This 177-nucleotide RNA was probed chemically with 2A3 and DMS.
The 2A3 profile rests on 1,202 reads.
The reactions ran in a buffer of 150 mM KOAc, 10 mM MgCl2 and 150 mM bicine (pH 8.5), at 24 C.
RNA sequence: GGGAACGACUCGAGUAGAGUCGAAAACACUCCACUUUACAUUUCCUGUAUUUUUCAUCCUCCAGUGUUUGAUAAACUUGGUUCCUGGCUGAAGGUGAGUCCCAUCAGGCAAAUUCUCAUCCACAAACAUGCGGAAAUUAUUCGUAAUUUCCGCAUGAAAAGAAACAACAACAACAAC
Reactivity to 2A3 in 0.01 (KOAc 150mM, MgCl2 10mM, bicine 150mM(pH8.5), 24C), signal-to-noise 1, nucleotides 027 to 126: c020a010c050u020c030c020a070c030u080u070u080a030c040a100u050u050u100c020c040u050g010u120a170u050u170u000u040u060c080a090u050c000c030u000c010c000a020g020u010g070u110u140u030g130a080u090a050a100a060c030u000u060g040g000u080u030c000c020u000g000g000c010u020g020a030a000g050g000u040g010a020g010u020c010c030c010a030u030c010a040g010g070c000a000a000a150u060u030c000u010c010a140u000c010c000a050c030a120a080a030
Reactivity to DMS in 0.01 (KOAc 150mM, MgCl2 10mM, bicine 150mM(pH8.5), 24C), signal-to-noise 3, nucleotides 027 to 126: c130a150c060u000c020c030a080c100u000u000u020a090c070a080u000u000u010c020c010u000g000u000a020u000u000u000u000u000c030a060u000c040c010u000c040c010a090g040u000g010u000u000u000g020a100u010a060a080a130c070u000u010g030g010u000u000c020c000u010g000g000c050u000g000a060a060g010g010u000g010a100g000u010c030c010c020a080u000c100a070g020g030c070a050a050a130u000u000c030u010c020a110u000c030c050a080c160a120a080a230
Reactivities are rounded to 0.1 and cut off at 0 and 3. 2A3 adducts were read by reverse transcription with SuperScript II with manganese.